[RMDB]
RNA sequence: GGGAACGACUCGAGUAGAGUCGAAAAGCACCGCCAUGCGCAUGGGUGCGAACACUUGACGGGAUCUACCAGACGUCUUGUGGAUUAGGACGUUCUAGGCGUAGUGCGCUACCUAGUUCGUCCGAAAGGGUAGGUGCUGGUUCGCCAGUACCUACCCAAAAGAAACAACAACAACAAC
Reactivity to 2A3 in 0.01 (KOAc 150mM, MgCl2 10mM, bicine 150mM(pH8.5), 24C), signal-to-noise 5, nucleotides 027 to 126: g000c000a000c010c030g070c030c020a210u300g060c090g020c140a090u150g150g020g000u010g010c000g010a080a000c010a000c010u010u020g010a010c010g020g030g080a090u060c030u120a130c040c050a050g040a090c010g020u010c000u020u010g010u010g020g050a070u070u150a070g000g000a000c000g010u000u000c000u000a010g060g020c100g090u020a030g040u070g050c110g010c060u010a020c000c000u000a010g000u000u000c000g000u000c000c000g000a020a030a020
Reactivity to DMS in 0.01 (KOAc 150mM, MgCl2 10mM, bicine 150mM(pH8.5), 24C), signal-to-noise 4, nucleotides 027 to 126: g000c020a050c010c000g010c060c030a120u040g000c090g020c040a100u040g010g000g000u000g000c030g000a100a110c020a020c010u000u000g000a010c020g010g010g000a190u040c090u030a140c120c070a110g010a190c020g000u000c000u020u010g000u010g000g000a070u050u040a100g000g000a010c000g040u010u010c010u000a000g000g000c300g010u030a030g010u000g000c080g010c020u000a130c020c000u000a010g000u000u010c000g000u000c000c010g010a020a070a090